[RMDB]
RNA sequence: GGGAACGACUCGAGUAGAGUCGAAAAGCCUUAUCCGGUAACUAUCGUCUUGAGUCCAACCCGGUAAAGUAGGACAGGUGCCGGCAGCGCUCUGGGUCAUUUUCGGCGAGGACCGCUUUCGCUGGAGACUUGGCGUCUUAUUCGUAAGACGCCAAGUAAAAGAAACAACAACAACAAC
Reactivity to DMS in 0.01 (KOAc 150mM, MgCl2 10mM, bicine 150mM(pH8.5), 24C), signal-to-noise 2, nucleotides 027 to 126: g020c000c000u020u010a060u000c060c020g020g000u000a070a150c080u000a080u040c000g000u000c010u020u000g000a250g000u010c020c020a020a280c110c070c050g000g020u040a030a070a130g030u010a110g050g020a040c020a100g010g010u000g000c030c030g010g040c180a010g000c040g010c050u030c010u020g000g000g030u050c040a080u000u000u010u070c060g000g000c050g000a160g000g040a170c070c050g010c080u020u000u000c020g000c000u000g000g000a110g010
Reactivity to 2A3 in 0.01 (KOAc 150mM, MgCl2 10mM, bicine 150mM(pH8.5), 24C), signal-to-noise 3, nucleotides 027 to 126: g020c000c000u060u110a110u040c010c000g000g020u050a070a100c030u040a080u190c020g090u030c070u070u130g100a030g030u000c020c000a050a050c090c010c020g020g010u130a140a070a020g080u080a040g020g060a020c010a010g060g000u010g050c000c000g040g040c010a010g040c010g000c020u000c010u010g120g010g000u010c040a080u000u040u050u070c030g010g000c010g010a030g080g000a030c040c010g030c070u050u140u060c020g000c000u030g020g020a110g020
The record gives the reactivity of an RNA of 177 nucleotides to DMS and 2A3. The 2A3 profile rests on 2,156 reads.